[RMDB]
RNA sequence: GGGAACGACUCGAGUAGAGUCGAAAAGCCGCCGGAUCUCAUCUCCCGGGAGAUCUUGAAGUUUUUGGAAGGAAUACUCGAUAUCUAAUAGAGUAAGAUAUGAAGAAACGGUGGCAUAGGACGGUAGCCAGUUGGAAUAAUUCGUUAUUCCAACUGGAAAAGAAACAACAACAACAAC
Reactivity to DMS in 0.01 (KOAc 150mM, MgCl2 10mM, bicine 150mM(pH8.5), 24C), signal-to-noise 5, nucleotides 027 to 126: g020c010c010g030c010c010g000g010a030u000c000u010c000a050u000c110u000c010c010c010g020g010g000a020g000a010u000c020u010u010g010a150a120g000u000u000u000u000u010g010g020a240a110g000g000a300a200u000a030c010u000c000g020a080u000a140u000c140u020a090a120u010a150g010a050g010u000a030a070g000a150u030a030u000g010a240a090g000a020a030a060c000g010g020u000g000g000c010a050u010a080g010g000a060c120g010g010u010a090g000
Reactivity to 2A3 in 0.01 (KOAc 150mM, MgCl2 10mM, bicine 150mM(pH8.5), 24C), signal-to-noise 3, nucleotides 027 to 126: g010c000c010g030c010c010g050g000a000u000c010u000c010a030u020c030u020c030c020c030g010g070g010a010g000a000u010c000u050u110g170a170a030g030u030u000u040u110u130g090g070a050a040g040g010a030a060u010a050c000u000c020g040a060u050a120u190c060u080a090a180u090a300g050a000g030u030a030a000g030a010u100a040u070g070a050a070g010a030a020a000c020g010g000u020g010g000c000a010u060a020g050g020a010c040g060g030u060a020g050
Chemical mapping of a 177-nucleotide RNA with DMS and 2A3. For 2A3 the reverse transcriptase was SuperScript II with manganese. Conditions: 150 mM KOAc, 10 mM MgCl2 and 150 mM bicine (pH 8.5), 24 C. For DMS, 4,309 sequencing reads were counted. Source: RMDB library OK2TRN, as collected in RNAgym.